[RMDB]
RNA sequence: GGGAACGACUCGAGUAGAGUCGAAAACCUUCGGAUGCCCAGGUCGGACCGCGGGGAGGUGGAGAUGCCAUGCCGACCCGAAGAGGAAAGGAAGGACACAGACGCGAACCGUGAGUGGAACCCUCGAUAACCUACAGCUUCGGCUGUAGGAAAAGAAACAACAACAACAAC
Reactivity to 2A3 in 0.01 (KOAc 150mM, MgCl2 10mM, bicine 150mM(pH8.5), 24C), signal-to-noise 7, nucleotides 027 to 129: c000c000u010u020c050g050g000a040u070g020c020c010c010a030g040g060u050c010g030g030a060c000c020g000c030g020g010g010g000a010g010g010u060g020g020a090g010a040u140g050c040c020a080u120g050c000c010g020a030c000c000c020g020a060a020g020a010g020g000a030a020a010g020g030a000a030g000g010a010c030a000c010a080g090a040c040g000c020g020a020a020c010c020g050u060g030a020g020u030g000g040a060a050c000c010c000u020c020g010a030u050a080a060
Reactivity to DMS in 0.01 (KOAc 150mM, MgCl2 10mM, bicine 150mM(pH8.5), 24C), signal-to-noise 7, nucleotides 027 to 129: c060c000u020u030c060g050g010a090u040g010c100c020c010a080g030g050u030c060g050g030a110c000c050g000c010g070g000g020g010a050g020g050u060g020g030a110g000a080u050g050c040c030a100u060g030c010c010g030a130c060c000c050g040a080a060g050a040g060g000a030a050a000g000g070a040a050g020g000a000c160a040c110a160g050a000c050g000c110g020a070a050c020c030g030u050g010a070g020u010g000g000a060a140c040c040c020u020c010g010a090u000a080a170